[RMDB]
RNA sequence: GGGAACGACUCGAGUAGAGUCGAAAAAGGCCCGGCAGUGGCUGCAAGAGAUGGACACCGACCCCGCCAAACUGCUGAAAAAAGCCCGCAUCGGCACGCCGGAGCAGGUCUGGGCCAGCUUGCAGGAACCAUAAUUUCGGUUCGCCGAAAUUAUGGUAAAAGAAACAACAACAACAAC
Reactivity to DMS in 0.01 (KOAc 150mM, MgCl2 10mM, bicine 150mM(pH8.5), 24C), signal-to-noise 1, nucleotides 027 to 126: a200g020g020c030c010c040g030g010c060a080g030u000g050g010c000u000g000c060a020a050g010a080g010a130u010g020g000a080c060a050c030c020g010a100c060c000c150c060g040c030c040a020a070a210c190u000g000c020u000g000a000a030a090a090a150a120g000c030c010c050g000c130a070u010c040g010g000c020a010c180g010c300c070g000g010a110g010c110a110g000g010u000c020u010g000g000g010c040c000a050g020c020u010u020g000c010a000g000g000a100
This 177-nucleotide RNA was probed chemically with DMS. It was measured as part of the RMDB library OK2TRN. For DMS the reverse transcriptase was MarathonRT. High DMS reactivity at an A or C suggests that its Watson-Crick edge is free. The reactions ran in a buffer of 150 mM KOAc, 10 mM MgCl2 and 150 mM bicine (pH 8.5), at 24 C.